[RMDB]
RNA sequence: GGGAACGACUCGAGUAGAGUCGAAAAAUGGGGAAGGCUUUCUAAAUAACCUUUACCAAUUUGGGCUAUUUGGGAGAGUAAAGGAAAGACCACACUCCACAGCGGGCUAUACCAAUAGUUCACUACUCUCGUCAUCAGCAUUCGUGCUGAUGACGAGAAAAGAAACAACAACAACAAC
Reactivity to 2A3 in 0.01 (KOAc 150mM, MgCl2 10mM, bicine 150mM(pH8.5), 24C), signal-to-noise 2, nucleotides 027 to 126: a000u100g000g000g000g000a050a000g000g000c000u100u000u000c030u000a090a150a230u040a050a070c020c000u050u000u100a070c000c000a000a000u240u120u000g080g020g080c110u040a060u070u000u020g000g000g000a010g000a000g070u080a040a040a040g050g000a020a020a020g110a060c000c000a070c000a020c090u040c020c020a000c030a030g110c040g000g020g000c000u030a000u060a100c020c010a010a000u000a000g030u000u000c020a040c140u110a080c030u010

The record gives the reactivity of an RNA of 177 nucleotides to 2A3. Source: RMDB library RFM100, as collected in RNAgym.